Source information:
An RNA of 307 nucleotides, treated with DMS and 2A3 and read out base by base. Reactivities are given for positions 27 through 266. For 2A3, 96,520 sequencing reads were counted. Source: RMDB library POS240, as collected in RNAgym. The reactions ran in a buffer of 150 mM KOAc, 10 mM MgCl2 and 150 mM bicine (pH 8.5), at 24 C.

[RMDB]
RNA sequence: GGGAACGACUCGAGUAGAGUCGAAAAGUAGUCAGUGUCGUGUGACUCAGUGACAUGACCCCGCUCGUAGCACACUGAGUCGGCUACGCGUGUGAAGAUCUUACUGUCUCAGGUCUUGCAUGCCACGGGUGAGACAGUAACUCGUGGAAGUUAUAUUCGGAGUUUAUGACUGCAUGCCACUGGACACUCCGAAUCCAGUGCACACGGGAGAUCAGUGGAGAUGAUUUUCAGCGGGAAGGGUGAUCUCCACUUACCCUUACUGACUAGGAUUACAGUUCGCUGUAGUCAAAAGAAACAACAACAACAAC
Reactivity to DMS in 0.01 (KOAc 150mM, MgCl2 10mM, bicine 150mM(pH8.5), 24C), signal-to-noise 9, nucleotides 027 to 266: g010u000a010g000u000c000a000g010u000g010u000c010g040u000g010u000g010a040c020u010c130a110g010u000g010a040c010a020u000g000a030c010c010c010c000g010c010u000c010g010u000a010g010c020a030c080a110c120u010g010a090g010u010c190g000g010c010u000a010c010g000c020g020u000g010u000g000a050a030g000a020u010c030u000u010a060c060u000g000u000c030u000c060a060g010g010u000c010u000u000g010c010a020u000g000c030c190a050c140g000g000g010u000g000a090g010a050c060a050g010u000a060a010c040u000c010g020u010g000g000a100a070g010u000u020a060u010a130u000u000c030g000g000a040g000u000u010u010a050u020g010a070c050u000g010c030a020u000g010c030c010a020c020u000g000g000a040c110a100c070u010c080c090g000a080a300u000c010c010a010g010u000g000c010a020c020a010c010g000g000g000a010g000a010u000c010a020g000u000g000g000a060g010a090u000g000a020u000u000u000u000c020a020g010c010g000g000g000a010a010g000g000g010u000g000a020u000c040u000c040c040a050c090u000u000a020c010c000c000u000u000a020c010u000g000a020c010u000a030g000
Reactivity to 2A3 in 0.01 (KOAc 150mM, MgCl2 10mM, bicine 150mM(pH8.5), 24C), signal-to-noise 9, nucleotides 027 to 266: g120u040a000g000u000c000a000g000u000g000u020c010g010u020g020u030g060a060c040u070c300a080g030u040g110a010c010a020u020g000a010c010c000c000c000g000c000u010c010g020u020a010g020c060a030c020a040c240u170g090a060g150u130c090g010g000c000u010a010c000g000c000g000u010g000u000g010a020a010g010a020u020c020u060u140a090c060u140g080u110c030u020c080a030g030g030u000c010u010u010g000c000a010u020g030c020c020a030c030g000g000g010u020g010a100g020a020c050a060g030u040a030a010c010u010c020g050u050g040g040a090a060g030u080u060a070u020a040u110u110c060g090g040a080g050u090u110u070a100u090g050a030c020u040g010c010a010u010g000c000c010a020c020u020g010g010a020c030a030c140u060c040c020g010a010a000u000c000c000a010g010u010g010c000a000c000a000c000g000g010g000a010g000a010u010c010a010g030u060g100g020a070g010a040u050g010a010u010u010u010u020c010a000g000c000g000g010g010a000a000g010g000g000u020g020a030u040c030u020c060c000a010c000u010u020a010c000c000c000u000u000a000c000u000g000a000c000u000a010g040